The record gives the reactivity of an RNA of 207 nucleotides to DMS and 2A3. 2A3 adducts were read by reverse transcription with SuperScript II with manganese. For DMS the reverse transcriptase was MarathonRT. Reactivities are given for positions 27 through 156. For 2A3, 8,185 sequencing reads were counted.
RNA sequence: GGGAACGACUCGAGUAGAGUCGAAAACAAAGCAUUCGGAGGCAUCCUCGUCCUACUACUCCUCCUCUCAGUCAUCAUCCUGCUAUACAAGAGUACUAUGUUCUUCAUCACCUUAUACUAUCAUCAAUCCUUCAUGGUUGCUGCUAGAGGUCCAACACGACCAUAAGAAAUUCGUUUCUUAUGGUCGAAAAGAAACAACAACAACAAC
Reactivity to DMS in 0.01 (KOAc 150mM, MgCl2 10mM, bicine 150mM(pH8.5), 24C), signal-to-noise 4, nucleotides 027 to 156: c060a070a080a140g000c040a140u000u000c050g000g010a150g030g030c040a120u000c030c020u000c040g020u010c020c020u000a070c040u000a050c030u010c010c010u000c030c030u000c040u000c040a110g010u000c060a100u000c050a090u010c010c010u000g020c020u010a080u020a090c040a040a110g000a130g020u000a080c050u000a080u000g030u000u000c010u000u000c030a080u010c030a070c040c020u000u000a130u000a060c070u000a080u000c030a100u010c040a080a110u010c020c030u000u000c050a100u000g010g020u000u000g020c020u000g010c010u000a080g020a090g050g010u000c030c020a040a110c090a290
Reactivity to 2A3 in 0.01 (KOAc 150mM, MgCl2 10mM, bicine 150mM(pH8.5), 24C), signal-to-noise 8, nucleotides 027 to 156: c070a010a090a010g050c040a090u100u130c080g030g010a010g020g010c020a070u090c020c030u040c030g050u070c020c020u040a090c020u020a040c020u010c010c020u000c000c000u020c010u010c040a020g080u020c010a060u010c000a020u030c050c010u030g030c040u070a040u020a170c050a080a020g040a020g100u020a040c020u040a050u150g050u060u030c000u020u040c020a070u070c030a060c020c000u080u040a050u040a150c060u040a040u100c040a010u020c000a020a090u070c010c060u150u100c060a060u150g040g000u020u040g020c010u010g000c000u030a020g010a030g080g030u040c050c030a080a040c150a020